Conditions: 150 mM KOAc, 10 mM MgCl2 and 150 mM bicine (pH 8.5), 24 C. An RNA of 207 nucleotides, treated with DMS and 2A3 and read out base by base. The 2A3 profile rests on 4,161 reads.
RNA sequence: GGGAACGACUCGAGUAGAGUCGAAAACACAGUAAUCUUCUCAAGCACACAAGUUGCAAAAGCGUCAGGAUGCUGAUGCGCAGCGACAGGUUCGUCGAUAAUGGCGUCGAUAAUGCCAACCUCUUUGAGUGUUACCGCCGAAACUUGCUGUUCCUCAAUAAUCGAUUUACUUCGGUAAAUCGAUUAUAAAAGAAACAACAACAACAAC
Reactivity to DMS in 0.01 (KOAc 150mM, MgCl2 10mM, bicine 150mM(pH8.5), 24C), signal-to-noise 2, nucleotides 027 to 156: c030a060c010a100g040u000a040a070u000c040u060u000c000u000c010a100a150g040c050a120c080a120c110a120a200g020u010u000g000c010a060a050a110a150g040c010g010u000c030a060g010g020a220u000g030c040u140g020a030u000g020c050g060c090a220g000c020g000a070c060a050g020g010u000u000c030g000u000c050g020a090u000a100a090u000g010g000c050g000u020c020g030a110u010a070a070u000g010c000c000a030a080c030c030u000c060u000u000u000g010a040g010u010g000u020u000a020c040c040g000c030c040g010a020a050a090c130u000u000g010c000u000g010u000u000c010c000u010c030a300
Reactivity to 2A3 in 0.01 (KOAc 150mM, MgCl2 10mM, bicine 150mM(pH8.5), 24C), signal-to-noise 6, nucleotides 027 to 156: c060a010c010a010g050u080a090a120u040c060u140u030c050u050c070a050a040g040c030a020c000a010c020a110a120g020u070u030g030c000a060a090a100a050g020c020g030u030c010a040g050g070a200u300g160c010u010g010a020u020g000c030g030c030a020g000c000g070a030c010a040g030g060u060u070c030g040u030c020g040a040u060a170a100u160g040g000c020g030u090c020g060a100u080a170a020u180g010c030c010a030a060c070c020u070c080u080u100u150g050a070g020u090g010u040u050a030c000c010g030c020c030g050a070a060a040c040u030u030g000c020u030g010u020u020c010c020u070c020a000